The record gives the reactivity of an RNA of 177 nucleotides to 2A3 and DMS.

RNA sequence: GGGAACGACUCGAGUAGAGUCGAAAAGAGAGUUCGUUGUCAACGAUGUUGUCCUCGCAAUUCUCUCUGGAACCACAACUAAUGUUGACAAAAUACGCCAGCUUCUCAAAGGUGUCACCCUUGACAACUAAGUUCUCCUGUUCGCAGGAGAACUUAGAAAAGAAACAACAACAACAAC
Reactivity to 2A3 in 0.01 (KOAc 150mM, MgCl2 10mM, bicine 150mM(pH8.5), 24C), signal-to-noise 1, nucleotides 027 to 126: g020a000g010a000g030u050u110c030g020u060u010g000u040c000a010a000c030g080a060u200g000u020u010g070u000c030c030u040c030g010c030a040a120u160u020c030u000c030u000c050u080g060g020a000a010c010c000a030c050a050a010c030u110a110a070u170g000u010u020g030a000c000a000a020a020a020u100a010c030g050c000c000a020g000c030u000u070c030u000c000a130a130a010g060g000u050g040u030c000a060c040c000c040u030u060g080a050c050a100a040
Reactivity to DMS in 0.01 (KOAc 150mM, MgCl2 10mM, bicine 150mM(pH8.5), 24C), signal-to-noise 2, nucleotides 027 to 126: g010a000g020a040g020u020u010c050g020u000u020g020u000c000a020a020c000g000a190u000g020u000u000g010u000c030c030u030c020g000c230a060a080u000u000c030u000c050u000c020u000g000g000a130a160c020c090a130c060a040a030c060u020a080a140u020g000u010u010g000a000c040a040a020a110a110u000a050c140g010c010c030a030g010c150u000u000c030u010c030a030a070a060g020g000u010g000u000c070a040c090c030c040u000u000g000a070c110a080a230
The 2A3 profile rests on 965 reads.
The RNA was probed in 150 mM KOAc, 10 mM MgCl2 and 150 mM bicine (pH 8.5) at 24 C.